[RMDB]
RNA sequence: GGGAACGACUCGAGUAGAGUCGAAAAGAAAGUAAAGUGGUGAAAGAAUAGCUACUCCAUAGACAGAAUAGGGUGUUCUCGAAAGUAAGAGGAAGAAUGCAUUUACCCUAGGUACAAUGCUUGUUUAGAUAUAGGAUAAAAAAAGAUCAUGGGAAGAAUGGUAUUAGUGAUUCGUCACUAAUACCAUAAAAGAAACAACAACAACAAC
Reactivity to DMS in 0.01 (KOAc 150mM, MgCl2 10mM, bicine 150mM(pH8.5), 24C), signal-to-noise 4, nucleotides 027 to 156: g010a100a080a200g020u000a040a070a100g060u000g010g020u000g030a100a080a100g000a070a100u020a150g010c020u000a060c040u000c020c040a150u000a110g030a170c080a070g000a050a090u010a070g020g000g030u000g030u010u000c010u000c020g020a110a070a110g030u010a060a080g000a080g010g020a070a090g010a070a100u010g010c050a100u000u000u010a050c030c010c060u000a020g030g040u010a030c090a080a090u000g000c070u000u010g000u000u010u000a090g010a100u010a080u010a090g020g000a100u030a000a010a040a040a060a040a110g000a050u000c020a070u000g000g000g000a060a110g000a080
Reactivity to 2A3 in 0.01 (KOAc 150mM, MgCl2 10mM, bicine 150mM(pH8.5), 24C), signal-to-noise 5, nucleotides 027 to 156: g010a020a020a010g060u130a080a060a010g030u030g040g010u050g040a110a080a050g040a100a090u060a070g010c020u040a030c020u000c030c020a110u090a050g040a070c050a020g120a080a060u070a130g050g000g000u040g020u060u030c040u020c030g050a070a040a030g050u110a060a040g030a020g050g030a020a040g020a070a030u110g020c020a020u010u010u110a060c010c010c030u050a060g020g000u020a010c050a070a020u040g020c000u070u070g030u110u110u070a040g020a030u060a020u070a180g000g050a030u180a070a100a000a000a000a000a010g030a030u060c030a030u070g030g000g020a020a050g020a030
About this RNA
Structure probing data (DMS and 2A3) for a 207-nucleotide construct. The DMS profile rests on 7,320 reads. The RNA was probed in 150 mM KOAc, 10 mM MgCl2 and 150 mM bicine (pH 8.5) at 24 C. 2A3 adducts were read by reverse transcription with SuperScript II with manganese.